[RMDB]
RNA sequence: GGGAACGACUCGAGUAGAGUCGAAAAAUUUGAAAUGUUUAGUUCAAGGCCUGACAUAUAGUAUGUGUUUAGUAUAUCUGAGACAGGUCUCAGUUAAUUAAGAAAGCUUAUUUUGCCAAAGUUAAGGAAGACACGCUAAAUUCGUUUAGCGUGUCUUAAAAGAAACAACAACAACAAC
Reactivity to DMS in 0.01 (KOAc 150mM, MgCl2 10mM, bicine 150mM(pH8.5), 24C), signal-to-noise 1, nucleotides 027 to 126: a070u000u000u000g000a040a030a140u000g000u000u000u000a020g010u030u020c020a140a020g030g010c000c000u000g020a080c030a050u000a060u000a030g010u010a210u000g000u000g010u000u000u010a050g000u020a060u000a020u020c040u000g020a070g000a130c070a070g000g000u000c000u000c040a050g000u000u000a020a010u000u000a010a010g010a200a120a120g010c000u000u000a020u000u000u000u020g000c050c030a080a060a100g000u010u020a100a150g010g010